[RMDB]
RNA sequence: GGGAACGACUCGAGUAGAGUCGAAAAGUCCCCCCAAGAGGGCCAAGAGAAUUCAAGAAUCGGAGGCAUUUCCCGUUAAGAGCUGGAAGUGCAUCUUGGAAUGGGAACCAAGGAGGAUGGAAAGAAAGGUUAACAAAAUGUUCGCAUUUUGUUAACCAAAAGAAACAACAACAACAAC
Reactivity to DMS in 0.01 (KOAc 150mM, MgCl2 10mM, bicine 150mM(pH8.5), 24C), signal-to-noise 1, nucleotides 027 to 126: g020u000c020c000c020c060c020c000a090a120g020a070g000g000g030c070c030a070a080g000a120g010a120a070u010u000c070a050a150g010a120a080u020c200g010g040a040g000g040c060a060u000u000u000c000c010c060g020u000u010a170a070g010a100g010c020u000g000g010a040a030g010u000g010c020a020u000c030u010u010g000g000a050a060u000g040g000g010a060a080c120c050a050a060g010g010a050g020g000a040u010g000g000a050a040a080g010a050a100a100

Annotation: The record gives the reactivity of an RNA of 177 nucleotides to DMS. DMS adducts were read by reverse transcription with MarathonRT.